[RMDB]
RNA sequence: GGGAACGACUCGAGUAGAGUCGAAAACUUGCGAGUGGGGUCUUCGGCGUUCAAGCGGUCAUACCACACCUUCGCUCGCCGGCGCACCCGGAGGCCGCCAGGAAGCAACCCUUCGCGAGCGAUGCUCGCGGAGAUCGGGAUUCGUCCCGAUCUCCGCAAAAGAAACAACAACAACAAC
Reactivity to DMS in 0.01 (KOAc 150mM, MgCl2 10mM, bicine 150mM(pH8.5), 24C), signal-to-noise 3, nucleotides 027 to 126: c070u000u010g000c000g010a170g000u000g010g000g000g000u010c020u000u000c040g010g000c090g000u000u010c140a100a150g000c060g020g020u000c030a140u030a160c110c060a090c090a080c060c010u020u000c040g000c020u010c020g010c030c040g000g000c050g000c150a090c080c030c010g000g000a050g000g020c050c020g000c030c020a120g000g010a040a090g000c060a100a070c040c020c010u000u000c010g000c010g000a010g020c040g020a080u000g000c050u000c020
Reactivity to 2A3 in 0.01 (KOAc 150mM, MgCl2 10mM, bicine 150mM(pH8.5), 24C), signal-to-noise 9, nucleotides 027 to 126: c010u020u040g010c000g010a040g120u190g030g010g000g030u050c020u030u030c030g050g010c050g070u090u150c090a080a030g050c030g040g000u070c020a070u110a200c040c040a050c030a050c080c030u080u090c030g010c030u020c030g030c020c010g030g000c030g010c030a080c020c020c000g010g010a030g030g010c030c040g060c020c010a090g070g040a030a020g010c040a050a080c000c000c000u040u040c020g000c010g010a010g010c020g050a040u160g030c030u040c040
Structure probing data (DMS and 2A3) for a 177-nucleotide construct. For DMS, 6,408 sequencing reads were counted. For DMS the reverse transcriptase was MarathonRT. Conditions: 150 mM KOAc, 10 mM MgCl2 and 150 mM bicine (pH 8.5), 24 C. The data come from the RNA Mapping Database (RMDB), library OK1LIB. For 2A3, 13,575 sequencing reads were counted. Values cover nucleotides 27 to 126.